RNA sequence: GGGAACGACUCGAGUAGAGUCGAAAAGUAGUGGAGAAGAAAGAAGUGGAAACACUUCGCGUACGUCCACUACAACGUGCGCAGUAUUGGAGUGUUUGAGGGAGAACCUCAAGCACUCCAGUACAAACAGGCGAUUUAGUUUCGACUAAAUCGCCUGAAAAGAAACAACAACAACAAC
Reactivity to DMS in 0.01 (KOAc 150mM, MgCl2 10mM, bicine 150mM(pH8.5), 24C), signal-to-noise 2, nucleotides 027 to 126: g000u000a030g050u040g030g000a120g010a300a170g000a190a030a020g010a020a000g010u000g000g020a120a110a090c010a010c050u000u000c000g010c110g000u010a100c090g000u000c000c040a050c000u000a000c000a070a110c060g020u000g000c080g020c130a120g040u000a000u020u010g000g100a090g010u000g010u000u000u020g000a020g000g000g000a190g000a090a270c020c000u000c000a000a000g000c000a000c000u000c050c000a000g000u000a040c000a040a140a180
Reactivity to 2A3 in 0.01 (KOAc 150mM, MgCl2 10mM, bicine 150mM(pH8.5), 24C), signal-to-noise 2, nucleotides 027 to 126: g030u050a000g010u030g070g080a120g030a220a050g130a160a080a010g000a000a010g000u000g010g010a000a030a000c000a020c050u010u000c020g000c040g020u080a030c000g080u010c020c030a010c010u000a000c000a010a030c000g100u220g030c090g000c140a070g000u000a000u000u000g000g000a000g020u000g000u000u000u000g010a040g040g040g000a240g130a240a160c000c000u000c000a000a000g000c000a000c040u010c000c000a000g000u000a000c000a000a010a000

Structure probing data (DMS and 2A3) for a 177-nucleotide construct. Reactivities are given for positions 27 through 126. The reactions ran in a buffer of 150 mM KOAc, 10 mM MgCl2 and 150 mM bicine (pH 8.5), at 24 C. For 2A3, 1,279 sequencing reads were counted. 2A3 adducts were read by reverse transcription with SuperScript II with manganese.